[RMDB]
RNA sequence: GGGAACGACUCGAGUAGAGUCGAAAACGGUAUUAAGGGCCCUAUGGGCACCGCCCAAGACAUGCUUGAUCUCGUUGGUGGCGAUGAGUCCAAGCUUGCCGCAUUGGAAACUCAAAUCGCAGAUCACCUAGGUAUUGCCCGCGUGUUCGAUUCAGUAUCGAGCAAAAUUAUUCGUAAUUUUGCUCGAAAAAGAAACAACAACAACAAC
Reactivity to 2A3 in 0.01 (KOAc 150mM, MgCl2 10mM, bicine 150mM(pH8.5), 24C), signal-to-noise 2, nucleotides 027 to 156: c070g000g050u090a080u190u300a110a150g000g000g020c010c020c070u120a200u300g000g020g000c060a080c030c030g000c000c000c040a020a000g000a000c020a020u080g030c010u000u010g010a010u000c020u010c040g080u030u070g030g000u030g010g000c010g000a010u030g000a020g020u000c020c010a000a000g000c000u050u160g130c080c070g060c110a260u030u010g030g000a100a170a140c000u000c040a060a210a240u000c010g000c030a020g020a270u130c010a000c020c020u040a050g120g040u100a170u120u150g030c010c000c000g000c030g020u020g020u010u060c040g040a090u040u100c030a020g070u150a030
Reactivity to DMS in 0.01 (KOAc 150mM, MgCl2 10mM, bicine 150mM(pH8.5), 24C), signal-to-noise 1, nucleotides 027 to 156: c020g020g010u000a120u000u000a120a130g010g030g030c010c010c030u020a080u010g010g010g060c000a030c010c000g040c030c060c000a060a240g000a070c060a000u000g000c030u000u010g030a020u000c020u020c000g030u000u000g000g030u000g060g030c020g040a080u010g020a080g030u000c010c000a000a120g010c030u000u000g030c180c130g040c050a160u000u000g020g010a160a040a080c040u000c010a030a060a070u000c030g000c030a120g000a130u010c020a040c060c010u000a060g020g010u000a090u000u000g030c000c000c050g010c080g010u010g000u010u000c030g000a300u000u000c050a060g000u010a090